[RMDB]
RNA sequence: GGGAACGACUCGAGUAGAGUCGAAAAAGGUCACAUGUCUCCAUUGCGAAUGAUAUGGGCAGGGCGGCAUAGUCCCCUGACCCCAGCCCUUCUUUCACAGUGAUGAAUGAAGCCUUGUGAGGCCAAAUAUUAUGUAGGAGUUCGCUCCUACAUAAUAAAAAGAAACAACAACAACAAC
Reactivity to 2A3 in 0.01 (KOAc 150mM, MgCl2 10mM, bicine 150mM(pH8.5), 24C), signal-to-noise 4, nucleotides 027 to 126: a000g030g010u090c040a030c010a080u110g160u070c000u050c060c000a040u050u050g010c030g040a090a020u070g050a080u070a090u230g010g010g000c020a010g030g010g030c080g020g000c080a200u230a190g150u200c020c000c010c030u050g160a270c010c000c020c000a020g000c000c010c000u010u020c000u020u030u020c010a000c010a040g060u030g070a080u040g010a030a010u040g020a040a000g000c000c000u050u030g050u040g050a060g070g070c010c000a040a060a000
Reactivity to DMS in 0.01 (KOAc 150mM, MgCl2 10mM, bicine 150mM(pH8.5), 24C), signal-to-noise 9, nucleotides 027 to 126: a040g000g010u000c060a200c060a060u000g010u000c010u000c080c010a030u000u000g010c040g010a040a020u000g000a080u010a060u010g010g000g010c010a190g000g000g020c130g020g010c060a100u000a150g000u000c050c040c060c070u010g000a140c080c010c010c040a080g020c010c010c010u000u000c010u000u000u000c000a020c020a040g020u000g010a110u000g010a170a030u000g000a080a170g000c030c010u000u000g010u010g010a130g010g010c030c050a050a070a130
An RNA of 177 nucleotides, treated with 2A3 and DMS and read out base by base. Source: RMDB library OK2TST, as collected in RNAgym.